[RMDB]
RNA sequence: GGGAACGACUCGAGUAGAGUCGAAAAUCCGCAUUCGUGCGGAGUGUCGCGUACUACGAACGAUCGUGCUCCUCCGUUGAAACGCUUCCCAAAUAGGAAGCGUGGAGGAGGAGAACUACACGACGUUCGUAUCGCUUAAAUGUGAGUUCGCUCACAAGAUCAAGUUUUGGUUCGCCAAAACUUGAUCAAAAGAAACAACAACAACAAC
Reactivity to 2A3 in 0.01 (KOAc 150mM, MgCl2 10mM, bicine 150mM(pH8.5), 24C), signal-to-noise 2, nucleotides 027 to 156: u000c000c000g010c000a030u080u130c300g100u020g000c010g040g000a020g000u090g120u050c100g000c020g000u030a030c000u000a010c060g000a000a000c000g250a300u010c000g000u000g020c000u030c000c000u020c040c000g070u060u000g000a050a050a010c000g000c000u010u010c050c040c000a200a290a040u180a090g010g010a000a010g030c000g000u000g020g020a040g000g020a020g000g000a000g000a000a030c050u130a000c030a000c000g000a000c000g000u000u000c000g030u000a000u000c000g000c010u060u120a220a180a120u140g000u000g000a020g050u000u180c220g100c090u020c020a010c000a060a040
Annotation:
Chemical mapping of a 207-nucleotide RNA with 2A3. The 2A3 profile rests on 997 reads.